An RNA of 177 nucleotides, treated with DMS and 2A3 and read out base by base. For DMS, 2,861 sequencing reads were counted. The RNA was probed in 150 mM KOAc, 10 mM MgCl2 and 150 mM bicine (pH 8.5) at 24 C.
RNA sequence: GGGAACGACUCGAGUAGAGUCGAAAAGCAAAUAAGAUUUAGGGGAAGAAGAUGACAACCUUCUCGCGGUCUUCCCUGUUACGUGUGUAGACACAAUGAAUGUCAUCAAAACUAAAUUUACAAAAAACAAUAUGUCUCGAUUCGUCGAGACAUAUUGAAAAGAAACAACAACAACAAC
Reactivity to DMS in 0.01 (KOAc 150mM, MgCl2 10mM, bicine 150mM(pH8.5), 24C), signal-to-noise 4, nucleotides 027 to 126: g020c130a110a080a090u000a030a120g010a190u010u000u000a060g000g000g000g000a030a030g020a210a130g000a020u000g000a020c010a030a050c010c000u000u000c020u000c040g050c160g000g000u000c000u000u000c000c010c000u000g010u000u010a070c240g010u000g000u020g010u010a110g000a040c020a020c020a090a090u010g000a050a070u000g010u000c010a020u000c000a100a090a100a100c170u020a030a040a080u010u000u010a070c120a000a040a070a030a050a050
Reactivity to 2A3 in 0.01 (KOAc 150mM, MgCl2 10mM, bicine 150mM(pH8.5), 24C), signal-to-noise 3, nucleotides 027 to 126: g040c040a040a110a140u230a190a080g070a170u090u140u180a050g000g010g000g010a000a020g010a050a020g010a010u010g000a010c010a010a010c010c000u050u090c010u040c020g070c040g000g000u010c000u000u000c010c000c000u010g030u050u070a070c110g000u010g010u020g100u140a070g100a240c010a000c010a030a020u070g040a030a010u030g020u000c000a000u000c000a000a050a000a070c040u130a080a070a200u220u300u240a100c080a020a090a030a020a040a010

DMS adducts were read by reverse transcription with MarathonRT. The data come from the RNA Mapping Database (RMDB), library M2PK90.